[RMDB]
RNA sequence: GGGAACGACUCGAGUAGAGUCGAAAAGAGAGGGUAACCACCGGCGCGCGUCACUGAUAUAUCCACCGGGGGGUAAGGGGAGUAAAGGAUACAGCGCGACGAAGUUAGCACGCUGCCCCGUAAGGCUUGAAGAGUGUAGUGUUCGCACUACACUCAAGUUAUUAUAUAAGUUCGCUUAUAUAAUAACAAAAGAAACAACAACAACAAC
Reactivity to 2A3 in 0.01 (KOAc 150mM, MgCl2 10mM, bicine 150mM(pH8.5), 24C), signal-to-noise 4, nucleotides 027 to 156: g060a000g000a020g000g010g000u060a050a070c020c010a030c060c000g020g000c010g010c000g010c010g060u060c020a010c070u030g020a020u050a020u020a050u180c050c040a080c060c080g030g000g020g010g020g030u070a070a070g040g010g010g000a020g000u040a020a110a060g010g000a020u040a100c040a020g000c010g010c010g010a020c020g000a030a020g040u070u100a030g050c060a010c070g030c030u060g010c020c000c000c000g010u030a050a040g030g020c050u120u100g100a130a080g000a070g010u000g000u000a000g000u000g020u030u020c140g010c020a000c010u000a000c000a000c000u010c000a000a000
Reactivity to DMS in 0.01 (KOAc 150mM, MgCl2 10mM, bicine 150mM(pH8.5), 24C), signal-to-noise 2, nucleotides 027 to 156: g020a110g000a100g030g010g030u010a070a070c060c020a100c080c010g000g020c020g020c050g030c070g020u000c080a170c000u030g020a170u000a090u000a070u000c030c020a160c040c020g000g000g000g000g040g010u030a050a090g000g010g030g000a130g030u000a090a100a140g010g000a150u010a050c050a080g010c000g030c010g020a060c030g010a080a120g020u000u000a110g010c040a060c020g000c030u000g020c020c000c000c000g040u010a040a100g000g030c040u000u000g020a150a210g020a010g010u000g020u010a010g050u000g020u000u010c240g030c010a010c010u000a000c000a000c000u000c000a000a090